[RMDB]
Source: RMDB library RSTRND, as collected in RNAgym. This 207-nucleotide RNA was probed chemically with 2A3 and DMS. DMS adducts were read by reverse transcription with MarathonRT. The DMS profile rests on 9,396 reads.
RNA sequence: GGGAACGACUCGAGUAGAGUCGAAAAUUUAAGUCGCAGUUACUCUGCACUGAAUAGCAGCCCUAACGGGUGAGGUGGUUGCGCUUAUCAAACAAAUGUAAAUGCUAGUGAGAUUAUAAUCCUAGUCUUGUUAUACGAGACUGCUUUAUGGUCUUGCCGAUACAGUAAUGUUCGCAUUACUGUAUCGAAAAGAAACAACAACAACAAC
Reactivity to 2A3 in 0.01 (KOAc 150mM, MgCl2 10mM, bicine 150mM(pH8.5), 24C), signal-to-noise 7, nucleotides 027 to 156: u050u030u020a090a030g060u110c050g000c010a000g020u030u020a060c060u040c020u190g020c030a050c080u060g060a090a060u060a140g010c050a010g010c010c000c000u060a110a050c100g020g020g000u120g080a040g000g030u020g020g000u000u030g000c020g000c010u050u060a080u140c070a050a060a130c060a050a140a050u160g050u160a080a070a060u130g050c030u020a020g010u010g040a010g010a000u000u030a020u020a030a010u020c010c090u070a000g000u000c000u010u040g060u100u150a160u060a150c030g000a000g000a000c000u000g010c010u010u030u010a020u040g000g010u000c000u000u010g000c020
Reactivity to DMS in 0.01 (KOAc 150mM, MgCl2 10mM, bicine 150mM(pH8.5), 24C), signal-to-noise 4, nucleotides 027 to 156: u000u010u000a060a040g030u000c080g040c000a040g010u000u010a070c160u000c020u010g010c010a120c030u000g010a100a080u000a080g020c060a220g000c010c020c030u020a150a150c190g010g020g020u000g010a090g030g020u000g010g020u000u000g000c020g010c080u000u000a110u000c070a080a080a130c070a070a130a080u000g010u000a070a080a130u000g010c030u000a070g020u000g000a020g000a010u000u000a020u000a010a020u000c000c010u010a010g030u000c010u000u010g010u000u000a170u000a230c010g010a020g010a030c000u000g020c000u000u010u000a010u000g000g010u000c000u000u000g030c030